[RMDB]
RNA sequence: GGGAACGACUCGAGUAGAGUCGAAAACAGCUCGUCCUGCUACAGGUGAAACCCCAUCUCUACUAAAAAAAUACAAAAAAAUUAGCCAGGUGUGGUGGCGGGUGCCUGUAGUCCCAGCUGCUUGGGACCAUCUUAUACUGUUCGCAGUAUAAGAUGGAAAAGAAACAACAACAACAAC
Reactivity to DMS in 0.01 (KOAc 150mM, MgCl2 10mM, bicine 150mM(pH8.5), 24C), signal-to-noise 5, nucleotides 027 to 126: c070a060g000c040u010c150g010u010c030c030u000g010c010u000a030c060a040g010g010u010g000a160a130a100c010c000c000c010a040u000c020u000c020u000a090c020u010a000a000a000a110a060a070a090u040a180c100a050a010a050a080a070a070a150u000u000a030g010c070c120a030g020g010u000g020u000g000g010u000g020g010c070g010g010g010u000g010c020c020u000g010u000a020g010u000c060c030c030a070g010c060u000g010c080u000u010g000g000g010a230
Reactivity to 2A3 in 0.01 (KOAc 150mM, MgCl2 10mM, bicine 150mM(pH8.5), 24C), signal-to-noise 6, nucleotides 027 to 126: c020a020g020c040u060c070g070u060c020c010u010g000c010u010a010c010a010g030g010u050g070a240a150a100c000c000c000c000a030u000c020u000c030u090a090c020u110a040a060a020a030a000a050a110u270a120c130a060a160a040a070a060a070a170u100u030a030g080c120c060a060g110g000u050g010u030g040g040u040g010g030c160g010g030g050u090g010c000c000u000g000u010a000g000u010c000c000c010a030g030c050u160g000c010u060u050g040g000g020a010